About this RNA
Conditions: 150 mM KOAc, 10 mM MgCl2 and 150 mM bicine (pH 8.5), 24 C. Chemical mapping of a 207-nucleotide RNA with 2A3 and DMS. The 2A3 profile rests on 2,637 reads. High DMS reactivity at an A or C suggests that its Watson-Crick edge is free. DMS adducts were read by reverse transcription with MarathonRT.
[RMDB]
RNA sequence: GGGAACGACUCGAGUAGAGUCGAAAACACAGGAUCGUGUGGAAGUCCUGCUCGGGGCGGAAGCAUUAAAACCAUUCGAGCUAGUCAAUGCGUGGCGUGUCUCUCAGCAGCGUGUUGGCGAAUGUAACAAGCUGCCUCUCGUUCGCGAGAGGCAGAAGUCAUCUAAUGAGUUCGCUCAUUAGAUGACAAAAGAAACAACAACAACAAC
Reactivity to 2A3 in 0.01 (KOAc 150mM, MgCl2 10mM, bicine 150mM(pH8.5), 24C), signal-to-noise 4, nucleotides 027 to 156: c040a000c010a010g150g070a210u200c140g080u030g000u010g040g020a050a010g050u010c020c020u030g000c050u020c060g010g000g000g000c060g000g020a030a010g060c040a040u170u240a020a070a040a100c050c010a030u060u090c030g020a020g070c030u030a020g020u020c000a010a010u010g000c000g020u050g060g000c070g040u020g080u010c020u010c010u010c120a040g000c000a010g010c000g010u020g010u010u000g000g000c020g020a010a040u120g030u100a100a060c050a090a040g040c000u010g000c000c000u000c000u000c000g010u040u050c180g010c020g090a000g000a010g000g000c000a000g000a000a000
Reactivity to DMS in 0.01 (KOAc 150mM, MgCl2 10mM, bicine 150mM(pH8.5), 24C), signal-to-noise 1, nucleotides 027 to 156: c020a030c060a070g000g010a100u010c120g020u000g030u000g000g010a290a100g030u000c000c020u000g010c050u040c060g000g000g050g010c040g010g010a220a170g050c050a050u000u010a010a150a220a130c000c010a070u000u010c060g010a080g030c030u000a120g000u010c020a040a010u010g000c030g030u000g020g050c010g060u000g010u020c100u020c070u030c080a150g050c010a060g000c020g060u020g000u000u000g000g000c040g020a120a050u000g010u020a050a180c090a030a150g010c000u000g020c000c000u000c000u020c010g020u010u010c200g090c040g000a010g010a000g000g000c020a000g010a020a050